[RMDB]
RNA sequence: GGGAACGACUCGAGUAGAGUCGAAAAACGCGCAAACAACAAAGGAUGGCGCCUUCGCAGACGCGCAUCAACGUUGGAGUUUGCGAAGUCAAGAGUAGCGAAUGAACGAGCCGAUAAGGCAGUUAAAGGGAUUAACUAUCUUCGGAUAGUUAAUCCCAAAAGAAACAACAACAACAAC
Reactivity to DMS in 0.01 (KOAc 150mM, MgCl2 10mM, bicine 150mM(pH8.5), 24C), signal-to-noise 3, nucleotides 027 to 126: a050c110g000c000g060c030a020a020a030c010a020a140c020a000a040a080g020g000a050u010g020g010c020g000c050c040u010u020c300g030c250a060g010a030c020g000c000g000c050a000u010c010a130a050c240g060u000u020g000g000a300g010u000u000u000g020c000g000a030a060g000u000c030a080a070g000a030g010u030a060g010c140g020a110a060u030g010a020a000c040g000a060g020c040c020g000a130u050a090a210g010g000c000a020g010u000u000a040a040a060
Reactivity to 2A3 in 0.01 (KOAc 150mM, MgCl2 10mM, bicine 150mM(pH8.5), 24C), signal-to-noise 3, nucleotides 027 to 126: a000c070g010c000g000c030a000a060a010c030a010a000c000a040a120a020g080g050a040u080g060g020c010g030c010c000u080u190c110g020c060a020g000a020c020g070c040g020c060a020u070c040a000a190c060g000u000u060g040g010a100g010u000u000u000g000c010g000a040a000g020u040c030a050a030g030a020g070u120a010g130c110g090a120a260u160g000a060a000c020g000a050g000c000c020g020a050u130a300a070g000g000c000a000g000u030u110a050a030a040
The record gives the reactivity of an RNA of 177 nucleotides to DMS and 2A3. The 2A3 profile rests on 1,636 reads. For DMS, 3,432 sequencing reads were counted. Reactivities are rounded to 0.1 and cut off at 0 and 3. 2A3 adducts were read by reverse transcription with SuperScript II with manganese.